[RMDB]
RNA sequence: GGGAACGACUCGAGUAGAGUCGAAAAUUGCGCCUCCGAUUCGCCGUCGGCAUUUCCCCAGCAGCCAUGACCUACCAGGCUGCGGUGCGGCUCGCCGCACAGGACAUCCCUCAUCGGGCGCGUCCUGGAUAGGGCUAUACUUUCGAGUAUAGCCCAACUCCAGCAUAUGGUUCGCCAUAUGCUGGAGAAAAGAAACAACAACAACAAC
Reactivity to 2A3 in 0.01 (KOAc 150mM, MgCl2 10mM, bicine 150mM(pH8.5), 24C), signal-to-noise 1, nucleotides 027 to 156: u150u090g010c020g010c010c000u100c090c030g100a110u070u070c020g000c000c010g050u040c000g000g000c020a050u070u030u020c010c010c030c000a020g000c000a000g030c030c000a150u110g070a160c000c030u120a100c050c020a030g000g000c000u010g000c000g010g000u080g000c010g010g000c060u050c040g060c000c000g020c000a040c000a030g000g020a000c000a090u100c020c010c030u100c000a140u090c050g000g010g000c000g000c090g010u030c000c000u000g040g000a060u160a130g050g000g020c000u000a000u000a000c000u050u120u070c290g090a000g000u000a000u010a020g020c060c000c010a000a000
The data come from the RNA Mapping Database (RMDB), library M2RFPK. An RNA of 207 nucleotides, treated with 2A3 and read out base by base. For 2A3, 815 sequencing reads were counted. Conditions: 150 mM KOAc, 10 mM MgCl2 and 150 mM bicine (pH 8.5), 24 C.